[RMDB]
Source information
An RNA of 177 nucleotides, treated with DMS and 2A3 and read out base by base. Source: RMDB library OK2TST, as collected in RNAgym. Reactivities are given for positions 27 through 126. For 2A3, 1,997 sequencing reads were counted.
RNA sequence: GGGAACGACUCGAGUAGAGUCGAAAAUGAUGCGGAAGUUCGCGUCGUGCGUGUGGGCGGGCAUCUCAUCGAUGGUCAGCGUGUGUUUGGCCUCGCCGCCUACUAGGCCGGGCUGACCGUAAUCGGCGGUGUCACGUAUUUUCGAAUACGUGACACCAAAAGAAACAACAACAACAAC
Reactivity to DMS in 0.01 (KOAc 150mM, MgCl2 10mM, bicine 150mM(pH8.5), 24C), signal-to-noise 3, nucleotides 027 to 126: u000g000a020u000g000c020g000g000a300a040g010u000u000c000g020c220g040u020c010g020u000g010c160g020u000g000u000g000g000g020c020g010g000g010c130a100u000c140u010c100a070u000c050g010a030u020g040g010u000c020a020g000c010g000u000g010u010g010u020u000u010g050g000c010c000u010c070g000c010c000g000c010c010u000a040c030u000a110g000g020c010c010g020g000g000c000u000g010a120c010c000g010u000a050a040u000c040g000g030c210
Reactivity to 2A3 in 0.01 (KOAc 150mM, MgCl2 10mM, bicine 150mM(pH8.5), 24C), signal-to-noise 2, nucleotides 027 to 126: u150g000a010u030g000c010g030g040a090a060g030u000u050c000g020c110g040u030c010g000u100g140c100g060u090g000u010g020g010g020c020g010g000g040c080a170u070c040u010c090a210u150c030g060a070u130g000g010u030c000a000g010c050g070u280g050u070g040u300u070u050g000g000c000c000u010c000g090c010c010g010c010c010u010a020c010u030a060g000g000c000c000g000g050g020c000u030g080a290c060c000g000u030a090a100u030c000g020g000c050